RNA sequence: GGGAACGACUCGAGUAGAGUCGAAAAACGGAUGGACUCCUUACGAGGAGUCCAUCCGAACCGCUGGUCGGAAACCAGCGGCUAACCCAAGGAAAGCCAGCGUACGAGUACGCUCGUACGCUGGCAAGGAAAUACCAGGAUUCGUCCUGGUAUUUCCAAAAGAAACAACAACAACAAC
Reactivity to 2A3 in 0.01 (KOAc 150mM, MgCl2 10mM, bicine 150mM(pH8.5), 24C), signal-to-noise 1, nucleotides 027 to 126: a000c000g000g000a000u000g000g000a000c040u060c020c020u020u020a060c300g030a020g000g000a020g040u000c000c000a000u000c040c000g010a000a000c000c000g010c010u010g000g060u040c220g170g060a150a260a150c010c000a000g000c000g000g040c060u120a160a140c020c000c040a000a020g130g010a120a060a000g070c030c080a000g000c060g000u000a000c040g000a000g010u040a040c220g060c130u000c040g000u000a040c000g030c000u000g030g030c000a000a000